[RMDB]
RNA sequence: GGGAACGACUCGAGUAGAGUCGAAAAAAAUCGGAGCCCAUAAGAGGAUAACAGCUAAAGGGAAUGGAUAGUAUGCUUCAGUUCUUCUACUUCUUCUCUUUAAUUAAAAUUGCAAAUCACUGGGAUAUAAAGUAGACCAGUUCGCUGGUCUACUUUAAAAAGAAACAACAACAACAAC
Reactivity to 2A3 in 0.01 (KOAc 150mM, MgCl2 10mM, bicine 150mM(pH8.5), 24C), signal-to-noise 2, nucleotides 027 to 126: a000a000a000u150c040g080g000a000g070c000c000c000a010u070a050a130g040a080g010g090a030u050a120a050c010a040g000c050u050a000a030a000g000g000g000a010a010u110g030g020a030u070a030g050u190a010u080g010c040u020u120c080a080g060u090u090c050u040u000c010u000a070c020u020u030c030u020u000c030u000c000u010u050u010a020a010u040u140a000a040a080a150u110u110g000c040a040a050a130u040c000a010c080u070g010g010g010a000u040a000
Reactivity to DMS in 0.01 (KOAc 150mM, MgCl2 10mM, bicine 150mM(pH8.5), 24C), signal-to-noise 3, nucleotides 027 to 126: a030a050a090u060c060g000g030a120g020c010c000c000a070u030a090a080g030a120g010g000a090u020a120a130c080a080g000c080u000a010a040a090g000g000g010a020a030u020g010g000a060u000a030g040u010a020u010g020c090u000u020c150a120g000u010u020c030u000u000c020u000a040c060u020u000c050u010u000c010u000c020u020u010u000a050a030u040u010a030a050a080a060u050u010g000c060a050a040a050u020c040a060c050u000g000g010g000a090u000a130
Source: RMDB library RFM100, as collected in RNAgym.
The record gives the reactivity of an RNA of 177 nucleotides to 2A3 and DMS.
For 2A3, 1,108 sequencing reads were counted.
Conditions: 150 mM KOAc, 10 mM MgCl2 and 150 mM bicine (pH 8.5), 24 C.